[RMDB]
RNA sequence: GGGAACGACUCGAGUAGAGUCGAAAAUGUCGUGAACACCAUUUGGUUAACUGCUCAAACUAAAUGGUGAUGAGGGAAGGAAUGACCCUCAUCGGACUACGCGAUCCGAGUGAUGGGAAUGGCUGACCCAUCGCUCGGCACUGGAGGGUGAGUGCCCCCAUGAUAAACUCUUCGGAGUUUAUCAUGGAAAAGAAACAACAACAACAAC
Reactivity to DMS in 0.01 (KOAc 150mM, MgCl2 10mM, bicine 150mM(pH8.5), 24C), signal-to-noise 2, nucleotides 027 to 156: u000g030u000c020g000u000g010a120a150c060a080c000c010a020u000u000u000g000g010u000u000a020a030c020u000g010c010u010c020a080a020a020c010u010a000a010a020u000g010g020u000g010a030u010g000a080g000g000g010a130a080g010g010a120a190u000g000a260c000c000c010u000c000a010u000c010g020g000a160c050u000a090c050g000c010g010a100u000c000c010g040a040g020u010g010a020u000g010g000g000a070a050u010g020g010c020u000g000a140c000c000c000a030u000c010g000c000u000c000g000g000c050a000c040u000g010g010a120g010g000g010u000g010a090g030u000g000c000c010c070
Reactivity to 2A3 in 0.01 (KOAc 150mM, MgCl2 10mM, bicine 150mM(pH8.5), 24C), signal-to-noise 8, nucleotides 027 to 156: u090g010u020c020g020u030g070a090a020c010a000c040c000a010u000u000u010g030g010u060u070a120a110c070u170g050c040u100c100a060a030a000c000u010a000a000a010u010g000g020u030g010a000u010g000a010g030g020g030a060a060g120g130a140a120u170g130a140c000c000c000u010c000a000u010c020g030g030a030c080u100a050c120g010c010g040a020u020c000c000g000a000g010u010g000a000u000g000g000g040a040a100u090g110g010c070u060g070a080c000c000c000a000u000c000g000c000u000c000g000g000c000a010c020u060g040g070a060g050g000g000u050g020a040g050u090g020c000c000c000
Source information:
Chemical mapping of a 207-nucleotide RNA with DMS and 2A3. For DMS, 9,649 sequencing reads were counted. It was measured as part of the RMDB library PDB130. The 2A3 profile rests on 14,615 reads. Conditions: 150 mM KOAc, 10 mM MgCl2 and 150 mM bicine (pH 8.5), 24 C. 2A3 adducts were read by reverse transcription with SuperScript II with manganese.